[RMDB]
Annotation:
The record gives the reactivity of an RNA of 177 nucleotides to 2A3. For 2A3, 545 sequencing reads were counted. For 2A3 the reverse transcriptase was SuperScript II with manganese. The RNA was probed in 150 mM KOAc, 10 mM MgCl2 and 150 mM bicine (pH 8.5) at 24 C.
RNA sequence: GGGAACGACUCGAGUAGAGUCGAAAAGAUGAGAACAUACUGUUCAGUUGGGCCAUCAGGUGACACUCCAAUUCUUGCAGGAGGUCACGAGCAAGAUAAAGAGGACGGCCUGACUUAACAAAAGAAAACCGUCGCAUCAUUUCGAUGAUGCGACGGUAAAAGAAACAACAACAACAAC
Reactivity to 2A3 in 0.01 (KOAc 150mM, MgCl2 10mM, bicine 150mM(pH8.5), 24C), signal-to-noise 2, nucleotides 027 to 126: g100a030u300g060a060g000a160a050c010a000u120a050c020u040g000u000u000c000a010g000u000u000g000g000g100c030c030a090u080c060a000g110g110u010g050a040c160a110c200u000c000c000a000a030u270u070c230u110u200g020c000a030g000g000a010g010g000u030c000a000c000g000a020g130c130a070a000g000a220u160a300a080a000g120a110g100g000a010c010g000g110c040c000u000g000a000c000u000u000a000a000c020a000a000a000a000g080a000a160a010
Record summary:
It was measured as part of the RMDB library OK1LIB.